This 177-nucleotide RNA was probed chemically with 2A3 and DMS. For 2A3 the reverse transcriptase was SuperScript II with manganese. The DMS profile rests on 1,553 reads.
[RMDB]
RNA sequence: GGGAACGACUCGAGUAGAGUCGAAAAGAACAGUGGAAAUAAACCAGUACUAGAGAACUGUAUCCAUUUUGAGUCAUUGGUUUCGUUCAUAAAGGUAUGAUUUAAUAGCGUCUGUAGGAGCAGAACACUCUGAUCCGUUAUUCGUAACGGAUCAGAGAAAAGAAACAACAACAACAAC
Reactivity to 2A3 in 0.01 (KOAc 150mM, MgCl2 10mM, bicine 150mM(pH8.5), 24C), signal-to-noise 2, nucleotides 027 to 126: g040a020a000c010a050g040u050g070g050a030a170a130u130a050a130a070c010c000a020g020u070a000c090u090a050g080a030g030a180a010c060u060g030u060a100u040c040c000a050u040u080u110u130g140a080g110u080c040a040u030u040g060g000u020u030u060c050g020u040u020c050a080u110a130a160a030g090g000u060a050u100g050a050u120u020u160a120a100u090a120g060c050g040u030c030u040g080u070a090g000g090a040g080c000a020g020a090a010c020a010
Reactivity to DMS in 0.01 (KOAc 150mM, MgCl2 10mM, bicine 150mM(pH8.5), 24C), signal-to-noise 2, nucleotides 027 to 126: g020a080a100c060a040g050u020g000g000a100a090a160u010a030a030a090c170c040a080g000u000a030c080u010a070g000a150g000a030a050c040u000g010u000a130u000c000c010a120u000u010u000u010g010a080g020u000c080a070u000u000g000g010u000u000u000c110g010u010u000c020a020u010a060a100a090g020g010u000a050u010g000a080u010u000u000a070a060u000a060g000c120g020u010c020u000g010u000a060g000g000a080g000c050a020g000a090a050c250a110